[RMDB]
RNA sequence: GGGAACGACUCGAGUAGAGUCGAAAAAGAUCAACGCGCAGUACGCUGCACUGACUGGUGACGACACCGGCUUGUUCGAUCAGGACGAUGCAAUCCGCAUUGCGGAGAGCGCGGGUGGUGCGUACUACAGCAUGUGGGAACGCAUGAUGAACAAGCGGUCAUGUUAUGUCUUCGGACAUAACAUGACAAAAGAAACAACAACAACAAC
Reactivity to DMS in 0.01 (KOAc 150mM, MgCl2 10mM, bicine 150mM(pH8.5), 24C), signal-to-noise 2, nucleotides 027 to 156: a040g010a110u000c030a140a100c050g000c020g000c000a120g010u010a140c080g070c040u000g000c030a030c050u010g040a150c100u000g070g000u000g010a110c090g030a140c040a050c030c030g000g000c010u000u000g010u000u000c120g000a150u010c030a050g020g000a300c030g070a040u020g100c020a040a180u020c000c010g030c000a300u030u000g080c000g040g020a070g000a170g060c010g000c060g020g030g030u000g020g020u010g010c000g000u000a100c020u020a060c010a240g040c030a030u000g000u020g020g010g030a100a100c020g000c000a090u010g000a140u000g000a040a020c060a010a070g010c050g020
Reactivity to 2A3 in 0.01 (KOAc 150mM, MgCl2 10mM, bicine 150mM(pH8.5), 24C), signal-to-noise 5, nucleotides 027 to 156: a000g120a150u140c080a040a100c040g010c010g000c080a000g000u090a030c220g020c070u050g030c030a020c050u050g070a010c030u080g040g020u040g060a090c120g010a020c040a010c030c040g030g020c000u010u020g010u030u000c040g080a080u040c020a030g100g050a020c040g060a090u100g010c010a020a030u000c000c000g000c270a300u050u300g020c010g000g020a020g010a020g030c010g000c020g030g000g010u140g050g030u020g000c000g000u000a020c010u020a010c020a060g220c050a130u220g020u000g000g020g030a130a030c010g000c030a010u050g030a040u040g000a050a000c010a000a000g000c010g010